[RMDB]
RNA sequence: GGGAACGACUCGAGUAGAGUCGAAAAUUGUCGUGCAACACCUUGGUGAUAGCCGCGGUCAGCGUGGUCUUGCCGUGGUCAACGUGACCGAUGGUCCCGAUGUUGACGUGGGGCUUGGUCCGCUGGAUCGGGGUUUUAUGUUCGCAUAAAACCCCGAAAAAGAAACAACAACAACAAC
Reactivity to 2A3 in 0.01 (KOAc 150mM, MgCl2 10mM, bicine 150mM(pH8.5), 24C), signal-to-noise 3, nucleotides 027 to 126: u110u100g200u120c100g010u080g050c030a060a060c050a120c030c020u070u210g020g010u060g050a150u100a090g030c020c000g000c010g000g030u080c040a030g010c040g090u300g040g050u020c020u000u000g000c000c030g270u100g060g000u000c000a020a010c070g020u070g030a030c040c060g160a090u240g010g010u040c040c000c000g060a150u220g030u140u090g050a100c090g030u120g000g070g000g020c020u010u070g000g000u030c010c000g020c030u030g080g030a000
Reactivity to DMS in 0.01 (KOAc 150mM, MgCl2 10mM, bicine 150mM(pH8.5), 24C), signal-to-noise 1, nucleotides 027 to 126: u000u060g000u030c010g020u000g030c050a060a040c040a000c020c030u010u070g000g000u000g000a100u030a040g000c000c000g030c100g070g040u040c030a040g020c030g000u070g020g010u000c040u000u010g020c010c000g000u010g050g000u000c000a050a040c020g030u030g000a030c000c000g060a150u050g010g000u000c010c060c070g000a180u040g000u010u000g000a050c110g060u070g020g020g010g050c000u010u010g000g000u000c010c010g010c000u010g000g030a210
Chemical mapping of a 177-nucleotide RNA with 2A3 and DMS.
Reactivities are given for positions 27 through 126.
It was measured as part of the RMDB library OK1LIB.
The DMS profile rests on 2,386 reads.
The reactions ran in a buffer of 150 mM KOAc, 10 mM MgCl2 and 150 mM bicine (pH 8.5), at 24 C.
In probing experiments dimethyl sulfate is read out at A N1 and C N3, which are open when not base-paired.